[RMDB]
RNA sequence: GGGAACGACUCGAGUAGAGUCGAAAAAGAAGGGCCUCCAAGAACAACACACACAGGAACUCGCCUGCUCUUCUCCUGAUGGUCCACAGUCACCCCUGCCCUUUGAGCAGGAGGAGCGUGACCUCCUGCCACAGCUACAGCCACAGCCACAGCCACAUGCUGAUUUAAAUUUCGAUUUAAAUCAGCAAAAAGAAACAACAACAACAAC
Reactivity to DMS in 0.01 (KOAc 150mM, MgCl2 10mM, bicine 150mM(pH8.5), 24C), signal-to-noise 1, nucleotides 027 to 156: a110g020a120a120g010g030g040c030c010u000c050c040a100a130g010a100a030c010a040a070c050a070c070a070c090a100c070a130g020g000a030a120c060u000c060g000c070c010u000g000c020u010c020u000u000c050u010c010c040u000g010a130u000g000g020u000c000c050a050c040a200g000u010c050a100c030c010c030c020u000g000c010c070c020u000u000u030g010a040g020c000a020g010g040a040g000g020a110g030c140g010u000g010a080c010c010u010c010c000u000g000c010c020a040c040a070g000c040u000a070c040a070g030c010c010a070c030a040g000c040c020a060c020a070g000c000c010a050c070a190
Reactivity to 2A3 in 0.01 (KOAc 150mM, MgCl2 10mM, bicine 150mM(pH8.5), 24C), signal-to-noise 2, nucleotides 027 to 156: a010g060a030a050g000g000g010c010c020u000c030c030a080a040g060a050a030c060a070a060c020a020c020a000c010a000c000a060g020g040a080a030c010u030c070g040c010c030u020g040c010u020c000u040u030c030u030c000c030u060g040a090u050g020g030u010c010c010a040c030a020g050u040c020a100c000c020c000c000u020g000c000c000c040u050u100u100g060a050g010c010a000g010g000a010g000g000a030g030c070g020u030g050a050c000c000u010c000c000u010g000c000c000a010c010a040g040c000u060a010c020a000g020c000c000a020c000a010g020c000c080a020c010a040g190c010c210a020c020a040